[RMDB]
Chemical mapping of a 207-nucleotide RNA with 2A3. Conditions: 150 mM KOAc, 10 mM MgCl2 and 150 mM bicine (pH 8.5), 24 C.
RNA sequence: GGGAACGACUCGAGUAGAGUCGAAAAUGAGACAAACACGCUUCACAAUGUGCGGCAAAGAAACAUUGUUUAUGCAAAGGCACUUCGCAAUGUGUGCUCAAACCUUGCUUAUUCAAACACGCUUCACAAAAGAAUCAGUGGUUCGCCACUGAUUCAACGUUCUUUACCGCUUCGGCGGUAAAGAACGAAAAGAAACAACAACAACAAC
Reactivity to 2A3 in 0.01 (KOAc 150mM, MgCl2 10mM, bicine 150mM(pH8.5), 24C), signal-to-noise 3, nucleotides 027 to 156: u180g030a040g030a010c080a040a180a000c130a000c080g000c000u010u010c050a010c010a030a030u000g000u000g010c020g050g010c020a070a070a060g100a010a030a000c010a000u000u000g090u030u050u130a070u060g030c020a000a060a110g060g000c000a020c020u130u060c100g030c140a060a040u190g060u000g040u000g080c000u060c100a100a140a050c020c010u020u030g000c010u120u120a050u160u130c040a040a050a040c040a020c110g050c030u140u140c090a040c080a150a020a050a040g000a000a000u000c000a000g000u010g030g050u050u070c200g040c060c000a010c000u010g000a000u000u010c000a000a000